RNA sequence: GGGAACGACUCGAGUAGAGUCGAAAACUGCAGGUUAAGCUCGGCGCUCAAGAGUUGUAUCCACCGGGUAGUUUCCAACUCCGGCUGGUGUGAAGAAGGAGCCGUUCCACUCAGGACGCUAACAAGAAGAAGCCGAAGCAACUUCAGGUCGCCGCGCCCUAUUGUAUUCCUUCGGGAAUACAAUAGGAAAAGAAACAACAACAACAAC
Reactivity to 2A3 in 0.01 (KOAc 150mM, MgCl2 10mM, bicine 150mM(pH8.5), 24C), signal-to-noise 3, nucleotides 027 to 156: c030u110g040c060a090g110g080u070u110a090a020g010c000u000c000g010g000c040g000c000u030c070a110a060g030a010g040u030u050g020u100a070u050c000c010a020c020c020g030g030g000u140a050g030u060u110u150c060c040a050a040c020u000c030c000g060g000c130u030g000g020u050g040u060g100a090a180g040a040a040g090g030a010g010c030c040g000u070u060c020c010a140c090u140c050a040g010g010a010c020g010c090u100a130a000c090a090a020g170a050a020g050a040a000g120c040c040g040a020a010g000c000a010a000c000u060u100c020a020g070g020u040c030g000c030c000g000c020g010c000
Reactivity to DMS in 0.01 (KOAc 150mM, MgCl2 10mM, bicine 150mM(pH8.5), 24C), signal-to-noise 2, nucleotides 027 to 156: c020u010g020c070a150g040g020u000u000a030a170g020c000u010c000g040g010c030g060c040u010c020a100a240g030a120g000u000u010g000u000a090u000c010c040a120c030c020g040g050g040u000a060g020u000u010u020c060c070a090a140c020u020c020c010g060g030c020u010g050g030u000g000u010g020a100a100g000a100a160g010g010a050g030c050c050g000u010u000c010c010a170c160u010c150a140g000g000a070c040g000c050u020a040a180c040a070a120g010a130a180g030a080a150g000c000c010g010a120a140g010c020a070a050c020u000u000c060a120g010g000u000c000g000c020c020g020c100g000c110
This 207-nucleotide RNA was probed chemically with 2A3 and DMS. The reactions ran in a buffer of 150 mM KOAc, 10 mM MgCl2 and 150 mM bicine (pH 8.5), at 24 C. It was measured as part of the RMDB library VIROID. For 2A3, 1,713 sequencing reads were counted.